Structure probing data (DMS and 2A3) for a 207-nucleotide construct. Source: RMDB library RNAMAK, as collected in RNAgym. Values cover nucleotides 27 to 156. Conditions: 150 mM KOAc, 10 mM MgCl2 and 150 mM bicine (pH 8.5), 24 C. For 2A3 the reverse transcriptase was SuperScript II with manganese. The DMS profile rests on 3,033 reads. DMS adducts were read by reverse transcription with MarathonRT.
RNA sequence: GGGAACGACUCGAGUAGAGUCGAAAACGCCACAACUUCGGUUGUGGCGAAAAAGAUAUGGAGAUCACCGUGGGAGGAGGUUGAUCGGAAACGAUCAAUACUCCAUCGAUCACGGUGAGUCUCCUAAGUCAAAAAGUUUACACUUCGGUGUAAACAAUACUUAAGAUCACUUCGGUGAUCUUAAGUAAAAAGAAACAACAACAACAAC
Reactivity to DMS in 0.01 (KOAc 150mM, MgCl2 10mM, bicine 150mM(pH8.5), 24C), signal-to-noise 2, nucleotides 027 to 156: c030g030c010c010a010c000a030a000c010u020u010c300g060g050u000u010g020u000g020g040c070g020a000a000a030a100a160g010a090u010a260u010g000g000a030g000a180u010c000a020c020c000g010u000g040g020g010a070g050g000a010g020g040u000u000g000a000u000c010g020g000a100a070a220c000g010a010u000c010a010a010u000a160c000u000c010c010a110u010c130g020a070u000c020a040c000g040g040u010g000a020g040u000c010u000c010c000u010a000a090g030u000c060a060a070a090a160a170g010u000u000u010a000c020a000c010u000u020c300g060g030u010g000u000a000a010a010c000a140a160
Reactivity to 2A3 in 0.01 (KOAc 150mM, MgCl2 10mM, bicine 150mM(pH8.5), 24C), signal-to-noise 3, nucleotides 027 to 156: c000g010c000c010a000c020a000a000c010u060u100c270g130g000u000u000g000u000g000g020c010g000a010a000a000a000a000g010a010u080a020u070g000g000a000g000a000u030c000a000c010c000g000u010g010g060g030a280g010g000a000g010g010u000u000g030a010u000c000g000g000a020a040a020c000g010a000u000c010a000a010u140a300c000u010c000c010a020u100c020g040a020u050c000a000c010g000g000u000g000a010g000u020c000u010c000c000u010a010a000g030u040c040a000a000a140a020a160g010u000u000u000a000c000a000c000u050u210c300g060g000u000g000u000a010a010a000c000a000a010